[RMDB]
RNA sequence: GGGAACGACUCGAGUAGAGUCGAAAAAGGGCAGGAGGAAAAGAAGGGGCGGGCCUCCCGAUCCGAGGGGUCCGUCCGCCAGAGUUGGGGAGCACUCCGGGCCGAAGGGUUGAGUAGUACCCAGAGGGAUAUAUCCUUCCUUCGGGAAGGAUAUAUCAAAAGAAACAACAACAACAAC
Reactivity to DMS in 0.01 (KOAc 150mM, MgCl2 10mM, bicine 150mM(pH8.5), 24C), signal-to-noise 2, nucleotides 027 to 126: a060g000g000g030c060a120g000g000a110g010g000a050a100a080a120g010a140a050g010g010g020g020c010g000g040g000c010c000u010c000c020c010g000a100u000c170c040g000a040g020g000g040g000u000c000c000g010u000c000c000g000c060c070a120g010a090g000u000u010g010g000g000g010a120g000c090a070c040u000c000c040g010g010g010c050c020g030a180a100g010g000g030u000u010g000a150g010u000a100g000u000a100c010c000c000a110g020a270g010g000
Chemical mapping of a 177-nucleotide RNA with DMS. The RNA was probed in 150 mM KOAc, 10 mM MgCl2 and 150 mM bicine (pH 8.5) at 24 C.